Structure probing data (DMS and 2A3) for a 177-nucleotide construct. It was measured as part of the RMDB library OK2TST.
[RMDB]
RNA sequence: GGGAACGACUCGAGUAGAGUCGAAAAUGUGGAAAGUGUGGACAAGUUAAAUAGGAGUGCAUCUCGUGAGCACCUUAUUUUCUUUAAAAACUUGUCCCUGGCUGAUAGGGUGUAUCUCCGCCUCGUAAAUUUAUAAGCUGUUCGCAGCUUAUAAAUUAAAAGAAACAACAACAACAAC
Reactivity to DMS in 0.01 (KOAc 150mM, MgCl2 10mM, bicine 150mM(pH8.5), 24C), signal-to-noise 6, nucleotides 027 to 126: u000g020u010g000g010a080a070a090g020u000g020u010g020g000a020c010a010a010g010u000u000a020a020a020u010a020g000g010a160g020u000g010c000a100u000c030u010c270g010u010g010a080g000c000a010c010c000u000u000a000u000u000u000u010c200u010u010u020a080a070a090a060a020c010u000u000g000u000c000c000c050u000g010g010c060u000g000a100u010a090g010g000g000u000g010u000a090u000c030u000c030c030g010c040c020u000c080g010u010a050
Reactivity to 2A3 in 0.01 (KOAc 150mM, MgCl2 10mM, bicine 150mM(pH8.5), 24C), signal-to-noise 3, nucleotides 027 to 126: u200g010u110g020g040a170a070a090g060u040g060u130g070g010a010c010a000a020g010u010u080a070a010a000u020a020g000g060a280g030u010g010c030a240u010c040u070c110g180u120g050a020g000c000a000c020c000u000u030a010u010u030u030u010c060u020u290u110a080a170a020a030a030c010u000u010g000u000c000c000c000u020g110g000c020u030g010a080u050a080g040g020g020u050g030u100a070u020c020u010c010c010g000c020c000u010c030g060u070a000
Reactivities are rounded to 0.1 and cut off at 0 and 3.